[RMDB]
RNA sequence: GGGAACGACUCGAGUAGAGUCGAAAAGCUGUCCUUGCUGGUGGAUAACGACCUAUUAUCGGUGGCGAGCAUCAACCAACAAGGUGCCCUGCUGGAUAAGCGUCGUAUUCAACAUUUGAUGAUUGCCGCUGUAACAUACGUUCGCGUAUGUUACAGCAAAAGAAACAACAACAACAAC
Reactivity to 2A3 in 0.01 (KOAc 150mM, MgCl2 10mM, bicine 150mM(pH8.5), 24C), signal-to-noise 4, nucleotides 027 to 126: g020c010u030g010u050c000c010u010u020g010c030u030g010g020u010g010g020a010u040a210a100c010g010a010c000c010u080a160u170u040a050u070c010g000g010u020g030g010c100g020a090g010c020a000u000c010a030a140c090c020a030a100c060a130a100g010g000u000g000c000c000c010u010g030c020u070g150g060a020u010a080a000g040c030g020u000c000g020u040a040u000u030c020a040a060c000a080u100u090u170g080a100u040g020a030u040u110g080c050c020
Reactivity to DMS in 0.01 (KOAc 150mM, MgCl2 10mM, bicine 150mM(pH8.5), 24C), signal-to-noise 3, nucleotides 027 to 126: g010c070u010g010u000c000c040u010u000g010c150u000g010g000u010g000g000a030u010a080a070c020g020a030c030c020u010a130u010u000a040u000c050g020g030u000g010g000c100g020a110g000c040a010u000c010a080a100c120c120a040a110c260a060a070g010g010u000g000c020c020c000u010g020c020u000g020g000a040u000a030a030g020c300g000u000c010g020u000a060u000u000c020a040a070c110a040u000u000u010g010a030u000g000a060u010u000g020c040c090